[RMDB]
About this RNA:
Conditions: 150 mM KOAc, 10 mM MgCl2 and 150 mM bicine (pH 8.5), 24 C. The record gives the reactivity of an RNA of 207 nucleotides to 2A3 and DMS. It was measured as part of the RMDB library OK3TST. For DMS the reverse transcriptase was MarathonRT.
RNA sequence: GGGAACGACUCGAGUAGAGUCGAAAAAUCACAAAAGUAGUUUGUGGCCCCUAGUAGGGUCACAGCCAGCCCCUGCGUCGGGUCAUGCUUUUUCCUUCACACGUUCUGCCUCCCCGUGCAAGGAGACAGACUGAGUGUUUUCAUUUAGGACAUUAAAUACCUAUUUAUAUUUCGAUAUAAAUAGGUAAAAAGAAACAACAACAACAAC
Reactivity to 2A3 in 0.01 (KOAc 150mM, MgCl2 10mM, bicine 150mM(pH8.5), 24C), signal-to-noise 2, nucleotides 027 to 156: a000u110c120a080c060a180a050a030a000g060u130a030g030u050u170u290g020u010g000g020c000c000c000c000u050a060g080u080a050g050g020g000u010c000a010c010a010g080c000c010a020g020c010c000c000c020u110g050c040g120u260c020g010g020g030u020c010a060u060g030c000u050u050u050u000u020c000c010u040u090c040a000c020a000c070g060u110u010c000u010g020c060c000u000c040c000c000c010g040u080g060c010a040a000g010g000a000g000a000c000a010g000a010c010u060g060a080g040u000g000u000u160u040u120c050a050u020u040u170a050g050g000a000c020a020u230u300a010a010a300
Reactivity to DMS in 0.01 (KOAc 150mM, MgCl2 10mM, bicine 150mM(pH8.5), 24C), signal-to-noise 1, nucleotides 027 to 156: a150u000c060a080c090a060a060a070a170g020u000a080g010u000u000u000g040u000g020g000c030c000c000c060u030a140g020u010a070g010g020g040u000c000a000c010a020g000c040c050a160g030c040c000c030c000u000g020c060g040u000c070g040g040g000u010c050a070u000g000c040u000u000u020u000u000c090c010u000u000c070a060c020a060c020g020u010u000c000u000g000c000c000u000c010c000c030c110g020u000g030c150a100a060g000g000a000g010a030c000a030g010a030c120u000g010a130g040u000g000u020u000u000u010c080a080u000u000u010a120g030g020a110c070a090u000u000a080a100a230